RNA sequence: GGGAACGACUCGAGUAGAGUCGAAAAUGAGCCACUUAAUGUACUGAAAAAGACUUGGCUAGAAGUAAGACCUGAUGCGAUAUAUGCGCUAUAUGCAGGGGCUCCGAAUAAUGGUGGUAAUAAUAAACCAGUGUAAGUGGUUCGCCACUUACACUGGAAAAGAAACAACAACAACAAC
Reactivity to DMS in 0.01 (KOAc 150mM, MgCl2 10mM, bicine 150mM(pH8.5), 24C), signal-to-noise 3, nucleotides 027 to 126: u020g000a060g000c010c000a050c110u000u020a070a070u010g010u000a060c060u050g000a080a020a090a110a090g010a050c030u000u000g010g000c030u010a050g000a090a030g000u000a090a100g000a110c060c020u000g020a130u020g000c000g010a090u000a080u010a050u060g010c110g000c050u040a120u010a060u050g020c050a040g020g030g010g010c010u000c020c070g030a060a040u040a090a060u000g000g010u000g000g010u000a080a060u040a080a070u020a040a170a180
Reactivity to 2A3 in 0.01 (KOAc 150mM, MgCl2 10mM, bicine 150mM(pH8.5), 24C), signal-to-noise 4, nucleotides 027 to 126: u090g030a000g060c010c000a050c010u080u150a080a100u160g040u160a130c010u120g140a090a120a030a040a100g050a020c000u090u150g020g000c010u030a040g070a090a010g040u110a100a050g020a080c040c000u060g020a100u050g040c050g070a010u020a000u020a020u300g080c070g020c050u100a140u040a010u190g060c020a030g000g010g030g000c020u050c040c010g100a100a030u160a050a050u050g010g040u000g050g030u070a090a050u080a110a050u040a020a130a070